This 177-nucleotide RNA was probed chemically with 2A3 and DMS. 2A3 adducts were read by reverse transcription with SuperScript II with manganese. Reactivities are given for positions 27 through 126. High DMS reactivity at an A or C suggests that its Watson-Crick edge is free.
[RMDB]
RNA sequence: GGGAACGACUCGAGUAGAGUCGAAAAAGCCUGGCAUCGUACGCGAUGCCAGGCAAUUGACAGCUCUUCCGCUAACUUCCCUCUGUGUGAUGCAGGGGUGCAUGAUGACAUAGCAAGGGGAGCAUAACUCUGAAGGUGGAUUCGUCCACCUUCAGAGAAAAGAAACAACAACAACAAC
Reactivity to 2A3 in 0.01 (KOAc 150mM, MgCl2 10mM, bicine 150mM(pH8.5), 24C), signal-to-noise 3, nucleotides 027 to 126: a010g020c000c000u020g010g000c000a000u000c000g010u030a060c190g000c020g140a010u010g000c000c000a000g000g000c000a010a000u010u020g030a010c000a010g000c000u010c000u130u030c030c010g000c010u010a100a130c000u000u000c000c030c000u000c000u000g050u000g170u160g180a190u300g000c020a000g000g010g000g020u020g000c090a020u040g030a100u100g030a080c080a070u030a010g000c010a080a170g000g000g000g020a000g000c000a000u060a030a050
Reactivity to DMS in 0.01 (KOAc 150mM, MgCl2 10mM, bicine 150mM(pH8.5), 24C), signal-to-noise 1, nucleotides 027 to 126: a110g000c010c000u000g000g000c000a000u010c000g050u040a110c300g060c000g000a000u000g000c010c000a000g000g020c000a010a030u030u010g030a230c300a130g010c000u010c000u040u010c000c000g000c000u000a030a160c010u000u000c000c000c000u000c010u000g040u010g000u050g010a140u140g000c000a000g020g000g000g030u000g010c180a020u000g020a220u040g000a120c040a250u010a010g000c050a020a200g000g000g000g000a000g040c040a010u060a060a130